[RMDB]
RNA sequence: GGGAACGACUCGAGUAGAGUCGAAAAGAAGGCCGUUGUCGCGCUCAAAUGGACCGUGCGCGAAAUGGAAGACCGCUAUCGCAAGAUGUCGAAGGUCGGCGUGCGCAAUAUUGACGGCUUCAACCAACUAGGAGUGGUGAUUCGUCACCACUCCUAGAAAAGAAACAACAACAACAAC
Reactivity to 2A3 in 0.01 (KOAc 150mM, MgCl2 10mM, bicine 150mM(pH8.5), 24C), signal-to-noise 3, nucleotides 027 to 126: g020a000a030g100g040c020c050g010u030u080g080u030c050g000c010g030c150u040c090a100a120a060u160g080g020a050c050c030g010u050g000c010g010c030g050a050a040a010u190g050g070a100a060g080a060c010c010g020c080u100a040u060c010g000c020a060a090g060a230u140g080u290c050g040a130a010g000g000u030c030g000g000c030g020u030g000c000g000c030a060a050u060a130u190u200g010a010c000g000g000c000u000u000c010a030a020c020c020a010a030
Reactivity to DMS in 0.01 (KOAc 150mM, MgCl2 10mM, bicine 150mM(pH8.5), 24C), signal-to-noise 3, nucleotides 027 to 126: g040a100a060g000g010c030c010g000u000u000g000u000c060g030c070g000c010u000c080a110a100a070u020g010g010a120c100c100g030u000g000c020g010c020g020a020a050a070u000g020g000a070a070g010a070c120c020g010c080u000a070u000c020g000c170a110a160g010a070u000g000u020c050g000a110a140g000g020u000c020g020g020c090g010u010g020c020g010c020a040a120u010a070u010u000g010a040c050g000g000c000u000u000c040a080a260c030c040a070a170